Structure probing data (2A3 and DMS) for a 207-nucleotide construct. The RNA was probed in 150 mM KOAc, 10 mM MgCl2 and 150 mM bicine (pH 8.5) at 24 C. For DMS the reverse transcriptase was MarathonRT. Source: RMDB library OK3TST, as collected in RNAgym. 2A3 adducts were read by reverse transcription with SuperScript II with manganese.

[RMDB]
RNA sequence: GGGAACGACUCGAGUAGAGUCGAAAAAUUCUGGUUUGUAUGGUGGAUUUAUGUCCUCCAUUUAUCUCACCUCCUAGAUUGAGAACCCUGGGUGUGAGAACCAACUCAAUCUUGGUUCCUCUUUAGCCGUCAUCCGAGGACCUGGCACAUAGUAGAACGUAAAUAGGUGAUUCGUCACCUAUUUACGAAAAGAAACAACAACAACAAC
Reactivity to 2A3 in 0.01 (KOAc 150mM, MgCl2 10mM, bicine 150mM(pH8.5), 24C), signal-to-noise 6, nucleotides 027 to 156: a000u150u070c060u060g000g040u030u060u080g050u040a020u010g010g030u010g010g000a030u050u260u080a170u300g050u030c000c010u010c010c000a010u060u080u060a180u050c040u010c020a010c010c010u040c000c010u020a010g010a060u010u080g040a060g030a150a060c050c040c070u080g030g000g010u040g010u030g010a070g020a030a020c010c020a010a040c020u040c070a020a060u030c020u020u030g030g000u070u080c010c000u050c030u040u120u130a060g020c040c020g060u050c030a090u040c040c060g020a060g000g050a030c010c060u060g020g020c030a020c020a090u100a040g140u030a020g060a180a020
Reactivity to DMS in 0.01 (KOAc 150mM, MgCl2 10mM, bicine 150mM(pH8.5), 24C), signal-to-noise 2, nucleotides 027 to 156: a130u010u020c040u000g040g020u000u000u000g020u000a020u000g030g020u010g010g010a020u000u000u010a100u020g020u010c000c010u000c040c000a070u000u000u000a090u000c040u010c010a060c050c050u010c030c020u010a060g010a100u010u010g000a130g010a100a100c040c030c060u000g020g030g040u000g010u000g040a150g000a060a070c030c000a010a300c040u000c110a070a080u000c040u000u020g010g010u010u000c020c010u000c060u000u000u010a130g010c010c010g020u000c040a090u010c040c080g000a130g000g030a060c020c030u020g000g020c000a070c060a090u000a110g010u000a090g000a070a210